[RMDB]
RNA sequence: GGGAACGACUCGAGUAGAGUCGAAAAUGGAGCUUAUCUGAUGAAAGUGCGUGCGCAUCAGUAUGACACGGUGGACGCACUUUGCUGGCGUCAUUACGGGCGCACGCAGGGUGUCACGGAGCAGGUACUGAAGGCAAAUCCGGGGCUUGCCGAAUACUAUUUUACCGUAAUUCGUUACGGUAAAAUAAAAAGAAACAACAACAACAAC
Reactivity to 2A3 in 0.01 (KOAc 150mM, MgCl2 10mM, bicine 150mM(pH8.5), 24C), signal-to-noise 6, nucleotides 027 to 156: u100g040g000a050g030c050u060u070a080u150c040u090g050a070u060g070a150a100a100g110u040g000c000g000u010g000c000g000c040a200u100c030a110g020u050a010u030g010a010c010a000c040g020g010u030g040g030a050c110g050c110a110c080u040u030u030g000c010u010g010g020c090g020u000c000a010u060u130a010c020g030g000g000c000g000c010a000c000g000c000a000g000g020g000u080g020u020c010a020c080g010g000a020g020c030a020g040g010u050a070c020u070g060a090a060g020g000c020a020a060a050u040c060c030g000g000g020g000c030u020u050g000c020c000g010a050a020u090a100c070
Reactivity to DMS in 0.01 (KOAc 150mM, MgCl2 10mM, bicine 150mM(pH8.5), 24C), signal-to-noise 4, nucleotides 027 to 156: u000g010g010a100g030c020u000u000a080u000c030u010g010a110u010g010a080a080a130g010u000g010c000g040u000g010c070g000c010a060u000c020a140g050u000a050u000g010a060c030a030c000g010g020u000g010g020a040c100g030c160a100c080u000u000u000g010c030u000g020g030c080g020u000c010a050u010u000a060c070g010g000g010c020g020c010a010c020g020c010a010g000g010g040u000g020u000c040a090c040g020g010a110g030c040a070g010g000u010a110c040u000g000a100a100g020g000c040a030a090a110u010c030c030g010g020g020g010c160u000u000g000c020c020g000a060a080u000a110c140
Chemical mapping of a 207-nucleotide RNA with 2A3 and DMS. The data come from the RNA Mapping Database (RMDB), library OK3TST. Reactivities are given for positions 27 through 156. 2A3 adducts were read by reverse transcription with SuperScript II with manganese. For 2A3, 7,037 sequencing reads were counted. The DMS profile rests on 14,410 reads.